[RMDB]
RNA sequence: GGGAACGACUCGAGUAGAGUCGAAAAGAGGGGCUUUCCUUCGGUGGCCUCGGCGCCGUGGUCGGCGAGCUUGUCCGAUUGCCGAUGGUCGGCUCGCGCCGGCUGCAGCUCGCGGCCGAACGCACCGACCGCGUAUGGCCUUCGGGCCAUACGCGGUAAAAGAAACAACAACAACAAC
Reactivity to 2A3 in 0.01 (KOAc 150mM, MgCl2 10mM, bicine 150mM(pH8.5), 24C), signal-to-noise 1, nucleotides 027 to 126: g070a000g030g010g000g000c000u130u000u080c000c000u020u030c060g000g010u140g050g010c030c000u000c010g000g020c040g030c010c000g010u020g090g000u080c000g030g010c000g040a110g020c090u090u070g110u170c020c030g050a080u000u130g110c080c100g150a130u250g050g010u030c000g010g000c000u030c090g120c000g020c070c000g000g000c000u020g000c000a040g050c000u070c110g020c040g000g000c000c000g010a060a000c040g010c040a000c000c000g000
Structure probing data (2A3) for a 177-nucleotide construct. Source: RMDB library OK1LIB, as collected in RNAgym. For 2A3, 495 sequencing reads were counted. For 2A3 the reverse transcriptase was SuperScript II with manganese.